Chemical mapping of a 177-nucleotide RNA with DMS and 2A3. For 2A3 the reverse transcriptase was SuperScript II with manganese. The data come from the RNA Mapping Database (RMDB), libraries RFM100 and RFMREP. The reactions ran in a buffer of 150 mM KOAc, 10 mM MgCl2 and 150 mM bicine (pH 8.5), at 24 C. Reactivities are rounded to 0.1 and cut off at 0 and 3.
RNA sequence: GGGAACGACUCGAGUAGAGUCGAAAAGGGUCAGGCGCCAAGCUCCCCAGCAUCAUGCAGGAAGCUGCAGCCCCGCAGAGUUAGGACAGCUCAUUUGGCACCCGGCGAGCCCUUCCCAGGCCCGCAGUUCAAUUGAUGCAUUCGUGCAUCAAUUGAAAAAAGAAACAACAACAACAAC
Reactivity to DMS in 0.01 (KOAc 150mM, MgCl2 10mM, bicine 150mM(pH8.5), 24C), signal-to-noise 6, nucleotides 027 to 126: g000g000g010u000c040a080g010g010c070g020c030c030a070a070g010c030u000c020c030c020c030a130g010c070a110u020c120a100u010g030c010a070g010g010a140a060g000c010u000g000c070a130g000c020c020c030c030g010c100a100g000a050g010u010u020a130g000g010a110c110a080g020c020u010c040a130u030u010u000g020g000c070a050c020c010c030g010g010c020g000a070g000c000c010c020u020u000c010c010c010a270g000g000c000c010c010g020c040a170g020
Reactivity to 2A3 in 0.01 (KOAc 150mM, MgCl2 10mM, bicine 150mM(pH8.5), 24C), signal-to-noise 6, nucleotides 027 to 126: g050g000g020u080c060a040g050g030c030g000c030c020a030a000g010c000u030c010c000c000c000a010g030c000a060u220c010a030u150g020c010a010g050g030a120a020g060c020u040g000c020a040g010c010c000c000c000g000c040a030g010a010g070u080u110a070g040g080a040c030a050g000c010u010c030a120u080u070u120g030g010c020a040c020c010c000g010g000c000g010a020g000c000c000c000u020u010c000c000c000a000g020g000c000c000c020g010c010a020g020